This 177-nucleotide RNA was probed chemically with DMS and 2A3. Conditions: 150 mM KOAc, 10 mM MgCl2 and 150 mM bicine (pH 8.5), 24 C. For DMS the reverse transcriptase was MarathonRT. For 2A3 the reverse transcriptase was SuperScript II with manganese. Source: RMDB library M2PK50, as collected in RNAgym.

RNA sequence: GGGAACGACUCGAGUAGAGUCGAAAACUGAGACGCUUCGGCGUCUCAGAAAUGGAACACAGGCGAAGGAAGCAAGACCUAUCAUGCCAAUGACCACGUGGAAAACUCAUACGUUCGCGUAUGAGAACAUGUAACGCACGUUCGCGUGCGUUACAUGAAAAGAAACAACAACAACAAC
Reactivity to DMS in 0.01 (KOAc 150mM, MgCl2 10mM, bicine 150mM(pH8.5), 24C), signal-to-noise 2, nucleotides 027 to 126: c010u000g000a010g000a010c000g010c020u010u000c190g030g000c000g050u000c000u000c000a010g000a000a070a110u000g020g030a070a070c050a020c090a100g030g000c080g020a110a070g010g020a040a080g030c110a060a120g000a080c050c030u000a050u010c090a050u000g000c040c020a030a100u000g000a210c060c020a100c110g010u000g000g000a110a060a110a120c000u000c000a010u000a000c050g010u010u010c260g000c020g010u000a020u000g000a000g000a040a080
Reactivity to 2A3 in 0.01 (KOAc 150mM, MgCl2 10mM, bicine 150mM(pH8.5), 24C), signal-to-noise 2, nucleotides 027 to 126: c000u000g010a000g010a000c000g000c040u030u030c160g140g030c010g000u000c000u000c000a010g000a000a010a000u100g030g020a070a020c060a000c030a080g050g000c050g050a050a040g020g040a070a000g140c110a070a020g060a090c010c030u050a070u190c020a040u120g000c000c000a000a010u020g040a040c020c010a030c060g060u140g020g090a110a080a020a040c010u000c000a020u000a020c000g020u000u050c300g020c010g030u030a010u010g000a000g000a030a000